[RMDB]
RNA sequence: GGGAACGACUCGAGUAGAGUCGAAAAGAUAUGGACUUCGUGUUUUCUCGAAGAACUCGGAAACGAGGGAGAGGGACACGAGAGUCCUAAGUCAAAAGCUGAAGCACAGUUCGCUGUGCUUCAGCAACUAUCUUAUGAUCUUCGGAUCAUAAGAUAGAAAAGAAACAACAACAACAAC
Reactivity to 2A3 in 0.01 (KOAc 150mM, MgCl2 10mM, bicine 150mM(pH8.5), 24C), signal-to-noise 4, nucleotides 027 to 126: g030a010u090a050u160g000g000a000c000u000u010c020g010u020g050u050u030u100u140c020u010c010g250a300a090g010a080a020c000u000c000g020g040a100a070a050c010g000a010g010g020g000a020g000a000g000g020g010a010c010a000c020g020a020g030a000g010u000c000c000u010a090a020g070u040c050a020a040a080a120g000c010u000g000a010a010g020c000a000c000a010g030u100u150c210g050c130u000g000u000g000c000u010u000c000a000g000c000a000a000
Reactivity to DMS in 0.01 (KOAc 150mM, MgCl2 10mM, bicine 150mM(pH8.5), 24C), signal-to-noise 4, nucleotides 027 to 126: g000a040u010a300u000g010g000a010c000u000u000c000g020u000g000u000u000u000u000c000u010c000g010a140a170g000a100a180c000u000c010g010g000a140a110a220c000g000a010g010g010g000a080g010a010g010g000g010a020c000a010c000g000a030g000a010g010u000c000c000u010a010a080g010u000c040a100a060a130a140g000c000u000g000a010a000g010c010a000c000a010g010u000u010c210g020c000u000g020u000g000c000u000u000c000a000g010c000a010a030